[RMDB]
This 207-nucleotide RNA was probed chemically with 2A3 and DMS. The data come from the RNA Mapping Database (RMDB), library OK3TST. For 2A3, 937 sequencing reads were counted. Reactivities are given for positions 27 through 156. The reactions ran in a buffer of 150 mM KOAc, 10 mM MgCl2 and 150 mM bicine (pH 8.5), at 24 C. High 2A3 reactivity points to a flexible backbone, as in loops and unpaired stretches. DMS adducts were read by reverse transcription with MarathonRT.

RNA sequence: GGGAACGACUCGAGUAGAGUCGAAAAUGGAGAAUAUUGCUUUUAAUGUUUUAAAAAAAGGUUCAUUUGUCUGUGCUGAUGGUGAACUACCAGUAGCCAUUAGUGGUGAUAAAGUGUUCGUACGUGAUGGUAACAUUGACAAUUUAGUCUUUGUUAAUGAACUAAGUACCUUCGGGUACUUAGUUCAAAAAGAAACAACAACAACAAC
Reactivity to 2A3 in 0.01 (KOAc 150mM, MgCl2 10mM, bicine 150mM(pH8.5), 24C), signal-to-noise 2, nucleotides 027 to 156: u090g010g020a020g040a040a050u130a070u110u050g030c040u040u080u080u120a070a150u160g040u090u130u090u150a140a190a040a010a000a020a010g050g020u030u030c000a020u040u010u080g000u000c040u050g140u070g030c000u000g000a000u020g000g050u010g010a020a050c040u050a130c110c000a010g030u030a000g020c010c000a000u000u040a030g000u030g130g090u070g000a010u050a060a120a030g080u050g010u050u070c030g010u040a070c020g050u070g010a040u070g050g070u010a010a000c000a000u000u000g030a000c020a080a100u070u220u200a180g000u000c000u050u010u010g000u030u050a080a040
Reactivity to DMS in 0.01 (KOAc 150mM, MgCl2 10mM, bicine 150mM(pH8.5), 24C), signal-to-noise 1, nucleotides 027 to 156: u010g010g010a160g000a160a120u020a070u010u000g000c020u000u000u010u000a010a160u010g030u000u000u000u000a000a050a070a060a110a070a080g000g050u000u000c010a040u010u000u010g010u000c010u000g060u000g030c020u000g030a060u000g020g040u000g000a080a080c060u010a090c060c030a080g010u010a300g020c010c010a020u010u000a010g040u000g010g000u000g000a050u000a030a000a050g020u010g010u000u000c010g030u000a070c120g010u020g020a110u010g000g030u000a000a030c000a030u000u030g010a030c020a160a130u000u000u000a160g020u000c040u010u000u000g010u010u000a040a160